Annotation:
An RNA of 177 nucleotides, treated with DMS and 2A3 and read out base by base. For 2A3, 5,324 sequencing reads were counted. The DMS profile rests on 4,285 reads. It was measured as part of the RMDB library M2PK50. The RNA was probed in 150 mM KOAc, 10 mM MgCl2 and 150 mM bicine (pH 8.5) at 24 C.

RNA sequence: GGGAACGACUCGAGUAGAGUCGAAAAGCGUGCGUGUUCGCACGCACGCAAAGCGGCGAGCUCCAGGCCGCCAAACAAUAUGGAGCACAAAUGUCAGCAAAAAAAGAAUGGUGUUCGCACCAUUCAAUCCUAUAGAGUAGUUCGCUACUCUAUAGGAAAAAGAAACAACAACAACAAC
Reactivity to DMS in 0.01 (KOAc 150mM, MgCl2 10mM, bicine 150mM(pH8.5), 24C), signal-to-noise 4, nucleotides 027 to 126: g000c000g020u000g010c000g080u010g030u000u000c180g010c000a000c000g020c000a000c000g010c000a030a100a110g010c010g010g000c010g020a100g000c000u000c010c010a010g010g020c000c010g020c020c140a060a100a050c060a040a030u010a080u000g000g000a040g020c010a150c230a030a090a060u010g020u000c170a070g030c130a000a000a050a100a080a090a100g000a020a000u000g000g010u010g030u000u010c180g010c010a010c000c000a010u010u000c000a080a080
Reactivity to 2A3 in 0.01 (KOAc 150mM, MgCl2 10mM, bicine 150mM(pH8.5), 24C), signal-to-noise 3, nucleotides 027 to 126: g000c000g000u000g000c000g000u030g040u050u100c170g020c110a000c000g000c010a000c010g000c000a020a050a040g000c000g000g000c000g000a060g010c000u000c000c000a010g020g000c010c010g020c020c060a130a110a010c040a020a000u070a070u150g000g000a000g140c020a000c010a010a050a050u300g090u170c050a030g070c090a110a060a010a010a050a010a070g010a000a010u010g010g020u010g020u050u090c200g020c090a000c000c000a000u010u000c000a000a010